About this RNA:
The data come from the RNA Mapping Database (RMDB), library OK1LIB. An RNA of 177 nucleotides, treated with 2A3 and DMS and read out base by base. For DMS the reverse transcriptase was MarathonRT. The DMS profile rests on 3,831 reads. 2A3 adducts were read by reverse transcription with SuperScript II with manganese.
[RMDB]
RNA sequence: GGGAACGACUCGAGUAGAGUCGAAAAGAGGAGCAGGCAGAUAAUCUUGUGCAGUAUGCAUGCUCGUAACUCCAGCGCACAAGUGGACGCACAAGAUUUGAAUCCAGCAUAGCGCAGGAGCCGCAGAAGGUAAUACCGUGUUCGCACGGUAUUACCUAAAAGAAACAACAACAACAAC
Reactivity to 2A3 in 0.01 (KOAc 150mM, MgCl2 10mM, bicine 150mM(pH8.5), 24C), signal-to-noise 3, nucleotides 027 to 126: g140a040g090g000a020g020c030a010g040g020c040a020g000a120u140a100a010u010c010u010u000g000u020g010c060a080g090u140a050u050g000c010a010u020g000c000u000c010g060u030a000a020c000u020c000c000a020g020c040g010c010a030c020a270a100g130u060g020g040a010c020g010c010a010c000a010a010g000a010u050u010u090g070a030a060u020c000c020a000g020c060a120u120a110g040c050g000c040a060g010g000a000g000c020c020g060c070a050g050a160
Reactivity to DMS in 0.01 (KOAc 150mM, MgCl2 10mM, bicine 150mM(pH8.5), 24C), signal-to-noise 3, nucleotides 027 to 126: g020a020g030g040a030g020c000a020g000g000c070a040g000a170u040a030a000u000c010u000u010g010u000g030c020a130g020u040a080u010g000c000a020u000g000c000u010c000g000u030a060a150c030u000c020c020a090g020c010g020c040a100c170a150a130g000u010g000g020a070c130g000c000a020c010a020a050g000a120u020u040u040g000a140a150u010c020c020a140g030c130a150u010a050g000c040g000c030a080g000g010a050g000c110c090g000c140a080g000a140